The record gives the reactivity of an RNA of 170 nucleotides to DMS and 2A3. DMS adducts were read by reverse transcription with MarathonRT. For 2A3, 76,833 sequencing reads were counted.
[RMDB]
RNA sequence: GGGAACGACUCGAGUAGAGUCGAAAAUCGUGCGUAUUUGGAUUCACGCACGACACAGCAGUUAACAAUCGAAGUCUUAGUGACUGUCGAUGGUGUAAAUUUUAGAACAGUCGUUCUAAAUAAUAAGGAGGACCUAAGUUCGCUUAGGUCAAAAGAAACAACAACAACAAC
Reactivity to DMS in 0.01 (KOAc 150mM, MgCl2 10mM, bicine 150mM(pH8.5), 24C), signal-to-noise 9, nucleotides 027 to 129: u020c010g020u000g000c000g030u010a030u040u020u040g040g020a150u030u020c120a020c000g000c010a000c020g020a000c110a070c120a060g010c120a090g020u010u020a050a040c060a180a020u000c000g000a080a020g010u010c000u000u000a130g000u060g020a010c010u010g050u010c000g000a020u030g010g030u000g000u040a060a060a080u010u000u010u030a010g010a020a020c010a190g010u040c160g020u010u030c000u020a010a010a010u040a080a060u060a030a050g030g020a110g000
Reactivity to 2A3 in 0.01 (KOAc 150mM, MgCl2 10mM, bicine 150mM(pH8.5), 24C), signal-to-noise 9, nucleotides 027 to 129: u020c000g000u000g000c000g010u030a100u060u170u220g210g050a110u150u090c070a000c000g010c000a000c000g010a000c020a000c000a010g120c010a030g030u110u170a120a030c030a030a020u010c010g000a020a000g030u010c020u060u170a130g050u140g190a010c010u060g170u070c000g020a010u010g000g030u090g000u030a080a130a130u050u050u010u020a010g000a020a000c020a080g250u200c060g010u110u000c000u000a010a020a010u110a010a030u110a060a060g140g020a040g060